[RMDB]
RNA sequence: GGGAACGACUCGAGUAGAGUCGAAAAUAAUGACUUGGUGACCACGUACUUGGCCGUAGCCGUAUUCAGCCAGUAUGGCCAAUGGGAUAGUCGCUCUGUGUACUGCACCGUGUAACGCCAGUCGUGGCGGAUUUAGGUGAUUCGUCACCUAAAUCCGAAAAGAAACAACAACAACAAC
Reactivity to 2A3 in 0.01 (KOAc 150mM, MgCl2 10mM, bicine 150mM(pH8.5), 24C), signal-to-noise 9, nucleotides 027 to 126: u230a010a100u100g070a020c040u070u120g050g000u060g050a050c000c010a020c030g060u100a050c070u080u130g010g000c070c010g050u050a030g060c020c010g030u030a140u090u110c050a020g060c050c010a030g040u060a070u090g010g000c000c000a040a110u170g010g020g050a090u120a100g040u040c030g020c020u020c040u050g080u010g040u080a080c050u130g010c020a020c020c040g010u030g020u100a120a030c030g010c010c000a000g010u030c010g020u020g040g010
Reactivity to DMS in 0.01 (KOAc 150mM, MgCl2 10mM, bicine 150mM(pH8.5), 24C), signal-to-noise 6, nucleotides 027 to 126: u060a080a060u020g010a070c080u000u030g000g000u000g010a140c090c020a040c000g010u020a050c050u010u040g020g000c040c020g020u020a080g020c030c040g000u000a050u020u020c130a120g000c100c120a080g010u000a030u010g010g010c000c110a100a030u020g010g000g000a080u020a030g010u000c030g010c070u040c100u020g000u010g010u050a030c030u000g000c300a140c040c020g000u010g010u020a110a100c160g000c000c010a000g000u010c010g010u000g000g010

Structure probing data (2A3 and DMS) for a 177-nucleotide construct. For 2A3, 19,462 sequencing reads were counted.